[RMDB]
RNA sequence: GGGAACGACUCGAGUAGAGUCGAAAAUGAGAGUUCGCUCUCAACGAUAGCGUACUACUUACGCUGGCGGAUGCGAUAAGUGCAUCCCAAAUAGGAUGCACUUUUGACGCAUUACCAGAACUACGUAAGUAUCGCAUUUACCAGGCUUCGGCCUGAAUGAGGUGUGUGGAUUCGUCCACACACCUCAAAAAGAAACAACAACAACAAC
Reactivity to 2A3 in 0.01 (KOAc 150mM, MgCl2 10mM, bicine 150mM(pH8.5), 24C), signal-to-noise 2, nucleotides 027 to 156: u140g010a000g000a010g000u100u240c260g010c080u050c000u000c000a080a010c090g120a080u160a050g000c000g090u090a050c050u020a010c010u030u000a000c010g020c070u040g000g010c110g120g030a000u020g020c020g000a010u010a030a000g000u000g050c010a000u040c000c000c010a170a270a000u140a130g000g000a000u000g000c000a000c000u000u000u040u060g130a050c050g010c000a000u000u000a010c000c000a000g000a140a060c300u300a110c130g010u000a000a000g000u000a010u220c000g000c000a000u030u030u040a200c160c030a000g000g020c000u100u150c250g200g010c000c010u010g000a030a030
This 207-nucleotide RNA was probed chemically with 2A3. 2A3 adducts were read by reverse transcription with SuperScript II with manganese.